[RMDB]
RNA sequence: GGGAACGACUCGAGUAGAGUCGAAAAUUCGGUCCUCUGGAGCGGACCGUGUGCUCCGUCAGGAUGUGGAGGUGUCGCGCCCUCCUAUGCGCGUAUGUACAUCGAUACGGUUAUGUCGCCUUUGUGUCGGCGUUUGACACUUACACAUACCGGAUAAAUAUAUAUCGUGGUUCGCCACGAUAUAUAUAAAAGAAACAACAACAACAAC
Reactivity to 2A3 in 0.01 (KOAc 150mM, MgCl2 10mM, bicine 150mM(pH8.5), 24C), signal-to-noise 5, nucleotides 027 to 156: u070u040c010g010g000u000c030c020u080c120u240g190g060a090g070c060g010g020a020c020c020g000u030g010u030g040c040u010c040c020g080u040c050a070g000g010a000u000g000u000g000g010a030g010g000u010g000u010c000g000c010g000c000c000c000u000c000c000u020a030u020g080c120g000c010g020u140a020u070g030u000a040c040a140u080c150g120a170u080a200c120g040g020u080u040a020u060g150u140c000g000c010c020u100u170u040g160u090g020u060c000g000g010c000g000u070u070u210g000a000c000a000c010u020u050a010c010a010c000a010u090a250c000c020g000g010a030u090a020a100
Reactivity to DMS in 0.01 (KOAc 150mM, MgCl2 10mM, bicine 150mM(pH8.5), 24C), signal-to-noise 3, nucleotides 027 to 156: u000u000c020g030g020u000c010c010u020c080u020g030g000a180g040c300g000g010a090c040c040g060u000g010u000g000c020u000c020c040g000u010c030a030g010g010a060u000g030u010g020g000a050g000g010u010g020u000c030g030c010g000c030c020c010u000c020c010u000a030u000g010c030g000c040g030u000a070u010g030u000a050c090a090u000c060g010a240u000a090c080g020g000u000u000a070u010g010u000c030g020c030c060u010u000u000g020u010g030u010c070g010g010c070g030u000u010u020g030a020c010a010c010u000u000a050c010a010c010a030u000a050c010c000g000g010a070u010a060a140
Source information
The record gives the reactivity of an RNA of 207 nucleotides to 2A3 and DMS. The DMS profile rests on 7,520 reads. For DMS the reverse transcriptase was MarathonRT. Conditions: 150 mM KOAc, 10 mM MgCl2 and 150 mM bicine (pH 8.5), 24 C. The 2A3 profile rests on 3,462 reads. Reactivities are given for positions 27 through 156.